[RMDB]
Structure probing data (2A3 and DMS) for a 207-nucleotide construct.
It was measured as part of the RMDB library OK3TST.
Reactivities are given for positions 27 through 156.
The 2A3 profile rests on 6,768 reads.
RNA sequence: GGGAACGACUCGAGUAGAGUCGAAAACGGGUCGUGUUAUCUAUCAGUGGGAUGACGCUAACCUCCGCGAACAAUUGAUUUAUGGUGACACCGGUUGGCGCGAUGUAAAAGCGGGUUUGCUAAACGGUUGGACUGCUACAGCAUUGUUUGCUCGUAGAUUUACUAUGGCAUUCGUGCCAUAGUAAAUAAAAGAAACAACAACAACAAC
Reactivity to 2A3 in 0.01 (KOAc 150mM, MgCl2 10mM, bicine 150mM(pH8.5), 24C), signal-to-noise 7, nucleotides 027 to 156: c040g000g010g020u040c030g020u020g020u050u040a030u020c050u020a110u120c090a130g070u160g060g040g020a030u030g010a010c020g010c030u030a050a060c010c010u020c040c050g010c040g020a030a030c020a040a060u070u110g070a080u060u130u150a120u220g050g000u050g030a030c010a020c050c000g020g000u010u020g010g000c030g000c020g050a070u060g050u230a050a050a070a020g040c030g010g050g010u050u120u130g000c010u020a050a040a020c020g010g000u040u060g050g030a040c040u070g000c010u060a020c030a030g020c010a030u000u080g040u080u060u050g040c020u030c060g020u000a030g000
Reactivity to DMS in 0.01 (KOAc 150mM, MgCl2 10mM, bicine 150mM(pH8.5), 24C), signal-to-noise 5, nucleotides 027 to 156: c050g000g010g020u010c090g040u000g000u010u000a040u000c020u000a190u000c080a180g030u000g000g000g020a070u000g010a040c000g040c030u000a060a080c020c010u030c040c050g020c020g010a090a070c030a040a090u000u020g020a120u000u000u010a080u010g020g020u000g010a110c060a060c010c000g000g000u000u010g020g010c020g020c020g000a060u010g010u000a060a070a130a190g000c030g000g010g020u010u000u000g020c020u000a040a060a060c040g010g000u000u000g030g010a140c110u010g010c010u000a060c050a070g020c040a100u000u000g020u000u000u000g010c010u010c060g020u000a110g010